[RMDB]
RNA sequence: GGGAACGACUCGAGUAGAGUCGAAAAGCUGAAGCAGAUCUCUUUCCACGGCCUGAUCGGAGAUCUGGAGGACAGUCUGUUCACGUCCGCCUUGAGUCUGCACCAGGCCAGUGCGCCGGGCAGCGAGACUCCCGUGAGGAUUCGUCCUCACGGGAGUAAAAGAAACAACAACAACAAC
Reactivity to DMS in 0.01 (KOAc 150mM, MgCl2 10mM, bicine 150mM(pH8.5), 24C), signal-to-noise 2, nucleotides 027 to 126: g080c070u010g000a220a110g000c040a010g030a050u010c000u000c010u000u010u000c040c040a230c100g020g040c000c040u020g000a010u030c080g020g040a010g000a020u000c000u000g000g010a100g000g000a070c080a090g020u040c050u000g000u010u010c070a080c010g000u000c030c010g010c030c030u010u060g000a030g040u040c000u000g020c090a230c030c020a110g030g020c010c000a130g030u020g010c130g000c010c000g010g020g030c010a110g000c050g030a110g020
Reactivity to 2A3 in 0.01 (KOAc 150mM, MgCl2 10mM, bicine 150mM(pH8.5), 24C), signal-to-noise 4, nucleotides 027 to 126: g040c030u080g070a080a010g050c020a040g020a060u050c020u000c000u040u060u040c080c060a150c100g000g050c010c040u080g040a100u140c060g010g040a020g000a030u010c010u000g040g020a100g020g020a010c020a020g040u070c070u100g090u080u090c110a090c110g020u010c010c010g040c010c010u090u090g030a060g100u040c020u020g010c070a190c040c030a090g000g000c020c020a090g070u080g030c070g000c020c020g020g000g000c010a020g000c000g000a050g020